[RMDB]
RNA sequence: GGGAACGACUCGAGUAGAGUCGAAAAGAUAUGGAGCCGACGAUCACCUAGCACUUGGACCUCGGAAACGAGCUAGUGCUGGUGGGAGGCUCCUAAGUCAAAACUAACGAACUUCGGUUCGUUAGAACCAUCAUCGUACGUUCGCGUACGAUGAUGGAAAAGAAACAACAACAACAAC
Reactivity to 2A3 in 0.01 (KOAc 150mM, MgCl2 10mM, bicine 150mM(pH8.5), 24C), signal-to-noise 2, nucleotides 027 to 126: g040a010u100a030u210g010g010a000g020c010c000g190a300c000g000a110u030c020a000c010c020u110a010g000c000a010c020u070u110g090g160a300c080c000u010c010g020g040a070a100a020c010g000a030g030c010u020a000g000u000g000c000u010g010g010u000g000g000g020a010g000g000c000u030c000c000u000a020a010g020u000c020a010a010a100a130c000u010a010a000c010g020a000a000c000u050u140c300g120g000u000u000c000g000u010u000a000g000a000a010
Reactivity to DMS in 0.01 (KOAc 150mM, MgCl2 10mM, bicine 150mM(pH8.5), 24C), signal-to-noise 3, nucleotides 027 to 126: g010a060u000a300u000g000g000a020g030c000c000g000a050c280g000a050u010c010a010c010c000u020a010g040c000a010c000u000u000g030g000a120c290c010u000c000g010g000a110a070a170c020g020a010g020c030u000a000g010u000g010c000u010g000g020u000g010g000g000a040g020g010c000u010c000c000u000a000a050g020u000c030a070a060a090a170c010u010a000a000c000g040a010a000c000u000u010c220g020g000u000u000c000g000u000u000a000g000a030a240